Conditions: 150 mM KOAc, 10 mM MgCl2 and 150 mM bicine (pH 8.5), 24 C. This 177-nucleotide RNA was probed chemically with 2A3 and DMS. 2A3 adducts were read by reverse transcription with SuperScript II with manganese. The 2A3 profile rests on 1,814 reads. The data come from the RNA Mapping Database (RMDB), library OK2TST.
RNA sequence: GGGAACGACUCGAGUAGAGUCGAAAAACAUUACCCUAUUGUUGAGUCAUUGUCUUUUGAUCUGCAUAAAGGGAAGACGUUAGCGAUUAUUGGGGAAUCCGGUUCAGGGAAAUCGGUAACAGCUCAAUCUCUUACUGGUUUUCGAACCAGUAAGAGAAAAAGAAACAACAACAACAAC
Reactivity to 2A3 in 0.01 (KOAc 150mM, MgCl2 10mM, bicine 150mM(pH8.5), 24C), signal-to-noise 2, nucleotides 027 to 126: a020c020a000u040u130a140c000c000c000u020a130u030u060g040u020u040g040a040g020u010c050a130u070u150g200u220c050u040u140u020u050g060a070u030c030u160g010c090a060u110a120a100a010g080g020g010a000a050g080a000c120g070u040u050a040g030c010g030a070u040u060a080u180u090g000g000g000g000a000a060u030c010c000g000g000u040u100c050a100g230g020g060a060a020a010u020c020g000g010u010a050a030c040a050g090c020u000c040a060a080
Reactivity to DMS in 0.01 (KOAc 150mM, MgCl2 10mM, bicine 150mM(pH8.5), 24C), signal-to-noise 4, nucleotides 027 to 126: a060c100a120u010u010a200c000c000c010u000a090u000u010g000u000u000g000a100g020u000c040a080u000u000g010u000c040u000u000u000u000g010a090u010c060u000g020c060a070u000a040a060a050g010g020g020a070a050g000a060c050g020u000u000a040g010c020g030a050u000u010a090u000u000g000g000g010g010a140a120u000c010c010g010g000u000u010c080a240g010g020g000a040a020a000u000c020g000g010u010a040a050c190a130g000c060u000c050a060a140